[RMDB]
RNA sequence: GGGAACGACUCGAGUAGAGUCGAAAAUGGGCAUUGGGGCGACGCUGGUGCUGGCAGGAGCGCAGCCGAUGGCGGCGUGGAUAGCACUCUUCUUCAUGUGCUUCUACAUCUGCGCAUACGCGUGGUCACUCUAAGUCCGGUUCGCCGGACUUAGAGUAAAAGAAACAACAACAACAAC
Reactivity to 2A3 in 0.01 (KOAc 150mM, MgCl2 10mM, bicine 150mM(pH8.5), 24C), signal-to-noise 2, nucleotides 027 to 126: u170g000g010g010c050a060u000u150g040g010g000g010c030g020a020c020g010c040u050g030g030u060g020c000u040g090g000c020a050g000g100a120g040c090g000c020a020g000c000c030g180a120u190g050g050c040g000g010c030g020u000g010g040a060u110a130g030c010a000c030u070c020u240u050c010u180u060c080a110u140g010u010g000c000u010u030c030u040a070c010a010u020c010u040g000c010g010c020a020u070a150c030g000c010g030u030g050g030u080c020
Reactivity to DMS in 0.01 (KOAc 150mM, MgCl2 10mM, bicine 150mM(pH8.5), 24C), signal-to-noise 2, nucleotides 027 to 126: u000g020g020g000c020a100u010u010g010g000g010g010c040g020a040c060g020c050u000g010g010u000g030c020u000g020g030c070a090g010g010a170g020c040g000c040a050g010c010c020g000a150u010g010g000c040g000g020c090g020u000g010g020a060u020a010g000c010a020c010u000c180u010u020c140u000u000c170a080u000g010u000g010c010u000u010c020u000a100c090a130u000c030u000g000c000g040c020a100u010a090c120g010c030g040u000g010g000u020c110